[RMDB]
RNA sequence: GGGAACGACUCGAGUAGAGUCGAAAAGCAAGAUUUGGAUGGACGAGAACAUCAAGACGAAGAACCAUACUAACAGCGUGAUAUUCUGGCUGGUCAGAGACAGGCGUCCAUUUGGCAGUCCAAUGGAGUUGAGCUACAUGUUCGCAUGUAGCUCAACAAAAGAAACAACAACAACAAC
Reactivity to 2A3 in 0.01 (KOAc 150mM, MgCl2 10mM, bicine 150mM(pH8.5), 24C), signal-to-noise 2, nucleotides 027 to 126: g010c050a050a080g060a160u100u200u260g100g000a030u020g020g000a030c030g020a020g060a140a040c010a080u030c040a010a080g030a000c020g040a050a080g030a050a030c090c000a060u090a110c070u050a170a040c050a070g020c060g040u080g080a040u020a110u110u070c010u020g060g000c030u050g040g010u110c010a020g000a000g000a110c030a020g040g050c000g010u050c030c000a040u070u010u010g010g000c060a020g040u010c020c020a040a080u150g060g000a070
Reactivity to DMS in 0.01 (KOAc 150mM, MgCl2 10mM, bicine 150mM(pH8.5), 24C), signal-to-noise 3, nucleotides 027 to 126: g000c100a130a040g010a180u010u000u000g000g000a070u000g000g010a060c040g010a100g000a060a150c110a060u000c040a070a170g000a050c040g010a110a050g020a040a120c140c050a050u010a050c110u000a110a130c170a060g010c040g020u000g020a070u010a140u010u010c030u000g000g040c160u000g010g020u000c030a060g000a120g020a070c100a080g000g010c050g000u010c000c000a050u010u010u000g010g000c040a110g000u000c020c030a070a070u000g020g010a260